RNA sequence: GGGAACGACUCGAGUAGAGUCGAAAACUUGUACAAAAUGGAAGAAAACGGUACUUGCCUGGUUGUGGAAGCAUGAGCCAUGAUGUUCCCACCAAUCGGUUUCUUCGUUUCUCCUUGAAACAUACCAAUACCUCGACCGUUUCGACGGUCGAGGUAUAAAAGAAACAACAACAACAAC
Reactivity to 2A3 in 0.01 (KOAc 150mM, MgCl2 10mM, bicine 150mM(pH8.5), 24C), signal-to-noise 1, nucleotides 027 to 126: c050u040u040g000u090a020c120a010a160a020a010u190g080g000a110a020g090a000a040a000a020c000g040g000u040a190c130u150u200g010c000c010u220g070g000u160u000g000u010g000g000a010a010g000c000a000u000g010a070g300c170c220a100u100g000a000u000g080u060u000c000c000c000a000c000c000a000a000u150c000g010g020u000u000u180c010u010u010c020g000u000u070u000c110u000c000c000u000u000g140a050a020a000c000a000u040a000c000c000a020